Chemical mapping of a 177-nucleotide RNA with DMS and 2A3.
RNA sequence: GGGAACGACUCGAGUAGAGUCGAAAACUGGAUACCUUCGGGUAUCCAGAAAGGCCGAGUAGUGAUGGGUCGCGAAAGGCCAUAAAUAAACAAUCACUCAGAAAAGCCAUAGCUUCGGCUAUGGCAAUCCACAAUUAAGUUUCGACUUAAUUGUGGAAAAAGAAACAACAACAACAAC
Reactivity to DMS in 0.01 (KOAc 150mM, MgCl2 10mM, bicine 150mM(pH8.5), 24C), signal-to-noise 4, nucleotides 027 to 126: c010u000g000g010a010u000a000c000c000u000u010c170g030g010g020u000a000u000c000c000a000g010a020a070a100g010g010c020c000g010a080g020u000a090g000u000g030a080u000g010g010g020u010c030g000c020g000a120a160a220g000g000c000c000a020u000a000a060a090u000a040a090a130c120a080a080u010c120a080c020u010c030a110g010a130a080a130a120g000c010c000a010u000a000g000c000u000u000c280g020g000c000u000a010u010g000g010c000a010a010
Reactivity to 2A3 in 0.01 (KOAc 150mM, MgCl2 10mM, bicine 150mM(pH8.5), 24C), signal-to-noise 3, nucleotides 027 to 126: c000u000g010g010a010u000a000c010c010u010u040c070g090g010g000u000a000u000c000c000a000g010a000a010a000g000g000c000c010g010a020g000u020a000g020u010g030a070u090g090g200g050u090c020g000c010g020a030a010a000g010g000c010c000a000u020a000a000a000u020a000a030a010c020a020a070u100c030a020c080u090c040a030g110a120a200a030a010g010c010c000a000u000a000g000c000u060u070c300g090g000c000u010a000u000g000g020c000a000a000
Background: Values cover nucleotides 27 to 126. Source: RMDB library M2PK50, as collected in RNAgym. The RNA was probed in 150 mM KOAc, 10 mM MgCl2 and 150 mM bicine (pH 8.5) at 24 C.